[RMDB]
RNA sequence: GGGAACGACUCGAGUAGAGUCGAAAAUGCCGAUUACGGCUACAUGGCAGCUGCUUAAUUAGCUCUGCCCGCUCUGGAUUAAGUUUGUCUGUGGUUUAAUCUAAGAGCGUCAUAAACGCAGACUGGUCCCUGGAUUUGUUUACUAGAAAGGGAUAAGGACCUGGUACUAGUUCGCUAGUACCAGGUCAAAAGAAACAACAACAACAAC
Reactivity to 2A3 in 0.01 (KOAc 150mM, MgCl2 10mM, bicine 150mM(pH8.5), 24C), signal-to-noise 1, nucleotides 027 to 156: u110g020c030c000g100a170u110u300a120c070g040g020c040u030a070c020a160u190g020g000c030a000g000c020u030g000c000u010u130a110a040u160u130a190g000c000u000c000u000g000c010c000c000g000c000u000c020u040g000g000a000u000u000a000a000g050u000u020u140g000u000c010u010g020u020g000g000u010u000u020a000a000u000c010u060a270a070g000a020g010c000g000u000c000a040u130a090a120a030c000g000c000a000g000a000c000u000g020g010u010c000c010c030u010g000g000a010u000u030u140g100u100u120u180a200c070u010a000g050a030a010a000g020g020g010a010u040a060a000g110